[RMDB]
RNA sequence: GGGAACGACUCGAGUAGAGUCGAAAAAUGAGAUAGGGGCCCCUGGAUGGCUGAGUCAGUUGGCCUCUUCUGACCUCCUCUCAGGGUCAUGAUCUCUGGGUCCUGGAGCUUAGCCCCUGGUGAGGCUACGGAUUAAAUUCUUCGGAAUUUAAUCCGUAAAAGAAACAACAACAACAAC
Reactivity to DMS in 0.01 (KOAc 150mM, MgCl2 10mM, bicine 150mM(pH8.5), 24C), signal-to-noise 1, nucleotides 027 to 126: a080u050g010a020g020a010u030a080g000g050g040g000c070c010c300c010u000g000g000a050u020g010g000c220u010g020a140g010u010c000a010g020u000u030g030g000c090c040u020c010u000u010c000u000g000a070c010c030u000c010c000u000c040u030c020a040g000g000g000u020c030a070u060g030a060u020c010u020c000u000g010g000g000u040c050c080u020g010g000a050g040c050u000u010a090g000c090c000c030c020u000g000g000u010g000a020g000g040c130u020
Reactivity to 2A3 in 0.01 (KOAc 150mM, MgCl2 10mM, bicine 150mM(pH8.5), 24C), signal-to-noise 3, nucleotides 027 to 126: a020u080g020a040g010a020u110a110g050g010g010g050c000c010c000c020u040g020g060a080u160g080g110c200u090g020a040g070u030c000a010g010u020u100g070g000c030c000u030c000u030u000c000u000g050a050c000c010u000c010c000u020c040u040c020a020g020g000g010u030c040a050u120g080a080u040c020u000c020u050g040g020g070u060c000c010u020g010g010a020g000c020u040u070a000g000c000c000c000c010u020g110g020u100g050a000g000g020c020u020